[RMDB]
RNA sequence: GGGAACGACUCGAGUAGAGUCGAAAAUGCGGCAAGGUAGUUCUGGGUCCUUAGGGGCUCCACCUUCACCGCUGUUAGGGGAGUUUUAUCCAGCGUCAGCAAAGGUGACCCGUGAUGGAGGCGGCCGGGAUAGCACAUAUCAGUCGGAUAAUUGUGCGAAAGUAAUAGAGUUCGCUCUAUUACUUUCAAAAGAAACAACAACAACAAC
Reactivity to DMS in 0.01 (KOAc 150mM, MgCl2 10mM, bicine 150mM(pH8.5), 24C), signal-to-noise 2, nucleotides 027 to 156: u000g000c000g060g060c090a010a070g020g030u000a110g060u010u010c060u010g030g010g010u000c000c030u000u000a150g050g010g010g050c000u010c010c030a030c020c000u000u030c080a060c030c000g000c000u000g000u000u000a080g000g010g010g020a130g030u000u010u010u000a090u000c050c020a140g010c040g000u000c070a090g010c040a060a080a140g020g020u000g010a100c030c000c020g010u000g010a110u010g010g010a090g000g000c120g000g010c070c030g050g000g010a140u000a070g040c020a030c030a060u000a030u010c050a170g010u000c060g040g010a080u000a060a150u020u000g020u000g010c050
Reactivity to 2A3 in 0.01 (KOAc 150mM, MgCl2 10mM, bicine 150mM(pH8.5), 24C), signal-to-noise 2, nucleotides 027 to 156: u100g000c030g010g000c020a010a010g020g000u040a020g080u160u190c130u090g020g010g000u010c010c010u070u110a130g000g010g000g010c010u010c010c000a020c010c010u040u020c070a080c020c000g000c040u020g050u110u110a080g000g000g050g010a050g010u060u070u150u120a050u050c020c020a000g030c020g150u060c040a040g000c030a060a040a120g060g000u060g030a140c000c000c000g020u040g030a040u080g010g020a010g030g040c030g010g020c020c020g040g010g010a010u080a060g020c030a000c000a010u070a010u060c070a060g160u090c050g060g000a010u030a100a120u170u070g020u000g010c050
An RNA of 207 nucleotides, treated with DMS and 2A3 and read out base by base.
The data come from the RNA Mapping Database (RMDB), library ARCHII.
For 2A3 the reverse transcriptase was SuperScript II with manganese.
The RNA was probed in 150 mM KOAc, 10 mM MgCl2 and 150 mM bicine (pH 8.5) at 24 C.
DMS adducts were read by reverse transcription with MarathonRT.
For DMS, 3,926 sequencing reads were counted.